[RMDB]
RNA sequence: GGGAACGACUCGAGUAGAGUCGAAAAUGGCACACCAUAUGCCUCAAGAGUAAACCCCUAGAAAGCCCGCACUUUUAUCAUUGAUUCCAAUCAGCCACUUGAGGGCCAGAUAGCUGGGACCUAUGGACAAUGAUAUCUCUUUCGAGAGAUAUCAUUGAAAAGAAACAACAACAACAAC
Reactivity to 2A3 in 0.01 (KOAc 150mM, MgCl2 10mM, bicine 150mM(pH8.5), 24C), signal-to-noise 5, nucleotides 027 to 126: u070g010g000c030a030c000a010c040c030a050u030a040u180g030c000c000u050c070a110a080g010a010g070u070a110a220a210c010c000c000c010u020a030g080a090a090a020g050c010c020c010g110c040a070c040u030u110u120u130a060u150c030a040u020u130g040a040u130u070c030c000a030a050u030c000a040g030c020c000a040c020u040u070g040a130g030g000g000c000c000a010g020a080u090a050g050c040u040g020g010g040a080c000c010u040a080u060g030g010a030
Reactivity to DMS in 0.01 (KOAc 150mM, MgCl2 10mM, bicine 150mM(pH8.5), 24C), signal-to-noise 7, nucleotides 027 to 126: u010g000g010c040a070c090a130c070c050a060u000a110u010g000c020c010u000c100a070a080g010a150g010u000a080a100a180c060c010c010c040u010a090g010a090a230a220g000c030c010c030g010c090a060c070u000u000u020u000a050u000c060a050u000u000g000a080u000u010c080c060a070a090u010c080a110g000c050c030a060c050u000u000g000a080g000g000g010c020c030a020g000a130u000a070g010c060u010g000g000g010a090c060c040u000a040u000g010g010a300